[RMDB]
RNA sequence: GGGAACGACUCGAGUAGAGUCGAAAAUUGCUGAUAAAUCAGCAGCUUGCGCCGACUAUUAAAUGUCAUUCAUCAGAAGUAGGGCCUGGGCGCGUGCUUUCAUUGUUUUACGUAGGGCGCCGUAAGACCGUGCUAUACGGUUCGCCGUAUAGCACGGAAAAGAAACAACAACAACAAC
Reactivity to DMS in 0.01 (KOAc 150mM, MgCl2 10mM, bicine 150mM(pH8.5), 24C), signal-to-noise 2, nucleotides 027 to 126: u000u020g010c000u000g000a040u010a090a200a190u010c010a010g020c000a040g010c060u000u010g010c020g010c040c010g000a090c050u000a150u000u000a020a060a080u000g000u010c110a160u020u010c100a050u000c130a090g000a100a090g000u000a060g010g020g020c070c030u010g020g020g000c060g000c030g010u000g000c030u000u010u000c090a110u000u000g020u020u000u010u000a020c000g000u000a080g000g010g000c030g000c200c010g000u000a020a030g000a150
Reactivity to 2A3 in 0.01 (KOAc 150mM, MgCl2 10mM, bicine 150mM(pH8.5), 24C), signal-to-noise 1, nucleotides 027 to 126: u050u040g000c020u000g020a020u090a230a180a160u040c000a000g020c010a020g000c050u030u080g000c030g000c000c010g030a090c020u080a020u250u120a100a140a080u100g030u070c070a110u170u070c040a080u060c040a020g010a200a040g030u060a050g060g100g010c000c040u080g020g090g050c040g000c050g010u000g000c010u090u150u040c010a130u060u180g100u080u070u020u010a040c040g040u020a050g030g000g000c010g040c000c000g000u030a000a010g030a010

Chemical mapping of a 177-nucleotide RNA with DMS and 2A3.
For 2A3 the reverse transcriptase was SuperScript II with manganese.
Conditions: 150 mM KOAc, 10 mM MgCl2 and 150 mM bicine (pH 8.5), 24 C.
DMS adducts were read by reverse transcription with MarathonRT.